[RMDB]
This 177-nucleotide RNA was probed chemically with DMS and 2A3. For 2A3 the reverse transcriptase was SuperScript II with manganese. The RNA was probed in 150 mM KOAc, 10 mM MgCl2 and 150 mM bicine (pH 8.5) at 24 C.

RNA sequence: GGGAACGACUCGAGUAGAGUCGAAAAUCGAGUAGCUUAUCCACGGGCGCAAAGUUUCUACCAGAUAGCGGCUGAGUGGCGAGUCAAUUUGCGCAAUCUUAUCCAAAUCUUGAUGCAGCAUUUGGGUACAAGUGGUUAGUUUCGACUAACCACUUGUAAAAGAAACAACAACAACAAC
Reactivity to DMS in 0.01 (KOAc 150mM, MgCl2 10mM, bicine 150mM(pH8.5), 24C), signal-to-noise 2, nucleotides 027 to 126: u010c070g000a100g020u000a040g010c040u000u000a110u000c020c080a070c120g020g000g020c060g000c040a050a030a120g000u000u010u000c030u000a120c080c040a100g010a090u010a090g010c030g000g010c010u000g000a110g030u010g000g010c080g000a040g010u010c090a060a080u000u000u000g010c050g000c050a070a080u010c060u000u000a050u000c020c010a020a010a010u000c020u000u010g000a100u000g040c150a030g010c110a050u000u000u010g020g000g000u000
Reactivity to 2A3 in 0.01 (KOAc 150mM, MgCl2 10mM, bicine 150mM(pH8.5), 24C), signal-to-noise 2, nucleotides 027 to 126: u100c000g010a010g030u100a010g040c040u130u110a070u130c000c000a060c100g000g090g010c060g030c030a050a040a030g010u030u170u010c040u070a060c000c020a030g050a190u060a030g100c110g020g000c020u060g050a040g070u040g020g010c040g010a010g060u060c030a060a150u070u080u110g050c040g010c050a010a100u010c000u050u050a030u040c010c000a020a010a010u000c000u040u090g030a050u080g110c090a020g000c000a000u050u000u030g000g000g000u050